This 177-nucleotide RNA was probed chemically with DMS and 2A3. The data come from the RNA Mapping Database (RMDB), library OK1LIB. Conditions: 150 mM KOAc, 10 mM MgCl2 and 150 mM bicine (pH 8.5), 24 C.

RNA sequence: GGGAACGACUCGAGUAGAGUCGAAAACGGCGGCACGAUUAUGGGUACACGUGGGUUGUCACAAUCCGUGGUGCAGCUACCCUGACGCAGAUCUAGAUAAGCACUUUGCACAGAAGGACUUAAUCCAACAGUGAUACGUGUUCGCACGUAUCACUGUAAAAGAAACAACAACAACAAC
Reactivity to DMS in 0.01 (KOAc 150mM, MgCl2 10mM, bicine 150mM(pH8.5), 24C), signal-to-noise 4, nucleotides 027 to 126: c160g000g000c040g010g010c020a050c040g020a150u040u030a060u020g000g000g010u010a120c080a120c070g020u010g000g010g000u000u000g000u030c120a070c060a070a000u000c050c010g010u010g010g000u010g000c150a070g010c050u030a060c030c020c010u000g000a050c070g020c030a020g000a090u030c080u010a110g000a040u010a100a060g010c180a070c010u000u000u000g040c100a060c120a060g010a030a090g020g000a110c120u010u020a070a070u010c030c050a140
Reactivity to 2A3 in 0.01 (KOAc 150mM, MgCl2 10mM, bicine 150mM(pH8.5), 24C), signal-to-noise 5, nucleotides 027 to 126: c050g030g010c010g010g020c020a020c030g040a030u060u110a060u270g030g000g020u050a050c060a000c070g040u070g030g030g000u050u070g140u170c040a030c030a090a030u010c010c010g030u050g010g040u050g020c050a060g010c010u050a060c000c000c000u010g040a020c030g000c050a020g000a070u060c020u070a040g040a100u030a080a040g020c020a020c010u050u100u100g040c050a060c020a030g070a080a060g060g020a030c030u110u080a020a020u070c010c000a050
For 2A3, 4,915 sequencing reads were counted.
DMS adducts were read by reverse transcription with MarathonRT.